Source: RMDB library RFMREP, as collected in RNAgym. Structure probing data (DMS and 2A3) for a 177-nucleotide construct. Values are in units of 0.01, from 0 to 300, in steps of 10. DMS adducts were read by reverse transcription with MarathonRT. The reactions ran in a buffer of 150 mM KOAc, 10 mM MgCl2 and 150 mM bicine (pH 8.5), at 24 C.

RNA sequence: GGGAACGACUCGAGUAGAGUCGAAAAAGGAGCGUUUAGGGGCCAGGUUAUUAAGCGACGAGGGGUGAAAUCUGGUGACUCGCUUAGGAGCAACAGAGGCGAAAGCGCUGGCCAGGAGCGAAUCCGAGUAACAACUACAGUUCGCUGUAGUUGUUACAAAAGAAACAACAACAACAAC
Reactivity to DMS in 0.01 (KOAc 150mM, MgCl2 10mM, bicine 150mM(pH8.5), 24C), signal-to-noise 2, nucleotides 027 to 126: a130g000g010a060g020c030g000u000u000u000a210g020g000g020g040c020c020a030g000g010u000u010a050u010u010a040a090g000c010g000a030c030g010a050g030g030g000g000u000g000a100a100a120u000c030u000g030g010u010g010a050c300u010c010g000c060u010u000a040g000g000a110g030c050a070a090c200a080g000a070g000g010c000g000a060a090a250g010c030g000c030u000g000g010c010c010a120g000g000a040g000c000g000a080a100u000c000c010g000a150
Reactivity to 2A3 in 0.01 (KOAc 150mM, MgCl2 10mM, bicine 150mM(pH8.5), 24C), signal-to-noise 1, nucleotides 027 to 126: a000g030g010a030g010c010g010u030u030u090a080g100g000g030g000c010c030a000g000g040u000u020a060u030u090a060a020g010c040g000a030c020g030a010g090g000g000g000u100g040a040a040a030u060c010u020g270g040u040g160a060c000u000c010g010c000u000u040a030g020g010a020g000c000a000a100c010a080g060a070g100g010c020g020a080a000a010g010c030g000c030u000g020g020c030c010a050g100g000a010g010c010g010a050a080u010c000c000g000a000